[RMDB]
Source: RMDB library RFM100, as collected in RNAgym.
The record gives the reactivity of an RNA of 177 nucleotides to 2A3 and DMS.
For DMS the reverse transcriptase was MarathonRT.
The 2A3 profile rests on 3,530 reads.
The RNA was probed in 150 mM KOAc, 10 mM MgCl2 and 150 mM bicine (pH 8.5) at 24 C.
RNA sequence: GGGAACGACUCGAGUAGAGUCGAAAAUGACCGCCCCCUGGGGCGGCGGGUCACCGGUCAGACGGUCCCGUCCCGAGGCGGCGAUCCGUCCGAAUGCGCGCCCCGCGAUGAUUCGCGGCGGUGCUCCACACGGUACUCAGUUCGCUGAGUACCGUGUAAAAGAAACAACAACAACAAC
Reactivity to 2A3 in 0.01 (KOAc 150mM, MgCl2 10mM, bicine 150mM(pH8.5), 24C), signal-to-noise 4, nucleotides 027 to 126: u150g010a020c020c000g000c010c000c000c000c010u100g050g010g100g040c070g010g010c030g030g000g010u130c090a010c050c000g000g050u150c070a050g040a230c000g000g040u080c010c000c000g050u110c000c010c010g020a070g000g010c030g000g000c030g000a030u010c020c020g050u060c020c010g140a160a080u170g050c030g000c000g020c040c000c020c020g000c000g010a050u230g020a090u190u050c000g000c010g010g050c140g000g000u020g000c000u010c000c000
Reactivity to DMS in 0.01 (KOAc 150mM, MgCl2 10mM, bicine 150mM(pH8.5), 24C), signal-to-noise 2, nucleotides 027 to 126: u020g030a040c010c000g060c000c000c110c000c070u010g000g090g010g040c280g010g020c070g000g020g010u000c200a030c030c000g000g020u010c300a210g000a210c020g010g010u030c030c000c010g010u000c020c030c050g000a060g030g020c230g000g050c030g040a000u000c000c260g030u000c000c000g010a150a120u050g000c280g020c040g000c010c000c000c000g010c000g000a020u000g000a230u050u030c000g020c000g000g000c050g020g000u000g000c020u000c160c150